[RMDB]
RNA sequence: GGGAACGACUCGAGUAGAGUCGAAAAGUGUUCUCAAGGGAAUCCUUUGCAGUGACGUCCUCGUAAGUGGACUAUAACAGUAGAACUCGUAUUAGUAGCCUAAUACUGCAGCCCUUUUUGGGGUUUGGGUUAGAUUAGCAUUCGUGCUAAUCUAACCAAAAGAAACAACAACAACAAC
Reactivity to 2A3 in 0.01 (KOAc 150mM, MgCl2 10mM, bicine 150mM(pH8.5), 24C), signal-to-noise 4, nucleotides 027 to 126: g080u070g010u040u000c000u010c050a010a020g070g000g010a030a110u160c010c040u070u040u040g000c030a010g020u010g020a050c060g010u000c010c000u000c010g100u090a190a070g040u050g050g010a010c000u040a030u030a190a070c050a000g060u130a000g070a080a030c030u040c090g010u070a070u080u080a090g130u080a060g030c020c010u020a040a050u030a060c020u040g030c020a030g000c020c000c000u070u080u040u070u100g060g000g000g030u060u050u120g080
Reactivity to DMS in 0.01 (KOAc 150mM, MgCl2 10mM, bicine 150mM(pH8.5), 24C), signal-to-noise 3, nucleotides 027 to 126: g010u020g020u010u000c000u000c020a080a050g000g000g000a090a080u010c060c000u000u000u010g000c020a060g010u000g000a220c230g000u000c010c000u000c050g030u060a080a180g000u010g000g000a030c000u000a080u010a250a100c080a090g000u000a070g000a040a290c020u000c100g000u000a040u000u020a050g000u050a150g020c220c010u000a040a050u010a030c010u000g000c040a110g020c000c000c000u010u000u010u000u000g010g000g000g000u000u020u000g000
The data come from the RNA Mapping Database (RMDB), libraries RFM100 and RFMREP. An RNA of 177 nucleotides, treated with 2A3 and DMS and read out base by base. 2A3 adducts were read by reverse transcription with SuperScript II with manganese. The reactions ran in a buffer of 150 mM KOAc, 10 mM MgCl2 and 150 mM bicine (pH 8.5), at 24 C.